Structure probing data (2A3) for a 177-nucleotide construct.
RNA sequence: GGGAACGACUCGAGUAGAGUCGAAAAGCAACACGUUCAUUUUAAUCGAUACUGCCAGGCUGGAAAUAUAUCGAUUUUUUCGGAUCCAUGAGCAAGCACCUGGUACCUAUAAAAAACACAUCCGACAACGUCCGCUAGUGUUCGCACUAGCGGACGUAAAAGAAACAACAACAACAAC
Reactivity to 2A3 in 0.01 (KOAc 150mM, MgCl2 10mM, bicine 150mM(pH8.5), 24C), signal-to-noise 1, nucleotides 027 to 126: g040c060a000a060c110a000c100g130u070u070c140a140u200u060u000u170a000a000u040c000g000a000u000a050c010u040g000c000c010a000g170g000c000u040g200g000a000a130a050u210a050u000a000u040c080g000a090u010u030u110u110u240u000c070g000g000a000u000c020c020a070u100g080a000g030c000a060a120g000c020a000c200c000u000g040g000u070a120c010c010u150a050u160a100a060a000a000a050a000c060a000c000a080u000c000c070g060a020c000a000

For 2A3 the reverse transcriptase was SuperScript II with manganese. Values are in units of 0.01, from 0 to 300, in steps of 10. For 2A3, 300 sequencing reads were counted. It was measured as part of the RMDB library OK1LIB.